[RMDB]
RNA sequence: GGGAACGACUCGAGUAGAGUCGAAAAGAUAUGGAUUGUGAAUCUCCGAUAAGAUGGCAUUCGGAAACGAAUGAACAUCUUUUGACGGAGACACAAUCCUAAGUCAAAAUCGCCGUUCGCGGCGAAACUUAAUCCGAUUCUUCGGAAUCGGAUUAAGAAAAGAAACAACAACAACAAC
Reactivity to DMS in 0.01 (KOAc 150mM, MgCl2 10mM, bicine 150mM(pH8.5), 24C), signal-to-noise 2, nucleotides 027 to 126: g010a030u010a300u000g020g000a000u000u000g000u000g000a210a220u000c000u000c000c010g020a200u010a020a020g020a010u000g000g010c000a010u010u000c000g010g000a080a110a180c000g000a020a000u010g000a080a090c010a000u000c000u000u000u020u000g010a260c080g020g000a000g030a040c000a000c010a000a010u000c000c010u000a010a090g010u010c010a100a080a100a110u010c000g010c020c010g050u020u000c250g050c020g010g000c020g010a010a040a100
Reactivity to 2A3 in 0.01 (KOAc 150mM, MgCl2 10mM, bicine 150mM(pH8.5), 24C), signal-to-noise 2, nucleotides 027 to 126: g000a010u060a040u140g000g000a000u020u000g050u060g070a300a300u040c010u000c010c020g120a130u090a300a020g010a000u000g020g000c010a010u000u030c030g010g050a090a050a020c010g020a010a000u010g030a000a060c000a000u020c000u030u040u010u060g110a070c020g000g000a000g000a000c010a020c000a000a000u010c000c000u000a090a010g000u000c000a040a050a020a300u050c010g000c030c010g050u090u070c300g050c000g110g020c010g010a070a000a010